[RMDB]
RNA sequence: GGGAACGACUCGAGUAGAGUCGAAAAGAUAUGGAAUCCCAUGACGCUGACCACGUAGGAUCGGAAACGAUCCUAUAUCAAGCGCAUGUGGAUUCCUAAGUCAAAGGCCGCAGUUCGCUGCGGCCAAGAAGAUAGGCAAGUUCGCUUGCCUAUCUUCAAAAGAAACAACAACAACAAC
Reactivity to DMS in 0.01 (KOAc 150mM, MgCl2 10mM, bicine 150mM(pH8.5), 24C), signal-to-noise 3, nucleotides 027 to 126: g020a050u020a300u010g010g020a010a010u000c000c000c000a020u010g000a170c000g010c000u000g010a190c300c260a130c250g040u000a000g010g000a010u000c000g000g000a090a120a190c010g000a000u000c000c000u000a010u000a050u000c140a150a020g000c000g010c010a000u000g000u010g040g000a010u000u000c010c000u000a000a090g000u010c000a100a160a120g000g010c000c000g010c010a010g000u010u010c200g010c010u000g030c000g000g000c000c010a010a010